This 177-nucleotide RNA was probed chemically with DMS and 2A3. The RNA was probed in 150 mM KOAc, 10 mM MgCl2 and 150 mM bicine (pH 8.5) at 24 C. For DMS, 1,766 sequencing reads were counted. The data come from the RNA Mapping Database (RMDB), library OK2TST.
RNA sequence: GGGAACGACUCGAGUAGAGUCGAAAAGUUGGCCGGAUCAGGCCAAAGCUGACGAGCUGCAGCACGCACUGCAGGACUCCGGGGUCCACGACGUUGCCGUGAUAUCCGAGGCGCAGGCCGCCACGGCGCGAGGAUAACGUUUCGACGUUAUCCUCGCAAAAGAAACAACAACAACAAC
Reactivity to DMS in 0.01 (KOAc 150mM, MgCl2 10mM, bicine 150mM(pH8.5), 24C), signal-to-noise 3, nucleotides 027 to 126: g010u000u010g010g040c000c010g000g010a120u010c230a180g010g010c000c010a020a010a120g010c020u000g000a220c190g010a120g010c010u000g010c010a030g020c030a130c200g000c160a120c060u000g000c010a020g020g010a090c040u020c020c070g000g000g000g000u000c040c020a070c110g010a060c080g020u010u010g030c020c010g050u000g010a140u040a130u010c080c030g020a080g000g000c020g010c140a200g000g000c110c020g000c050c040a070c040g000g000c190
Reactivity to 2A3 in 0.01 (KOAc 150mM, MgCl2 10mM, bicine 150mM(pH8.5), 24C), signal-to-noise 1, nucleotides 027 to 126: g090u030u030g010g020c020c030g050g070a300u280c150a090g010g040c020c000a010a010a000g050c030u050g080a080c030g020a040g040c020u050g000c000a010g060c050a010c190g030c040a020c010u020g000c000a020g060g050a040c000u020c010c000g110g020g000g000u000c030c000a030c060g070a010c080g050u100u140g000c030c030g020u040g030a040u000a040u190c050c040g020a070g030g000c050g020c050a070g170g000c030c020g000c020c020a030c030g000g000c030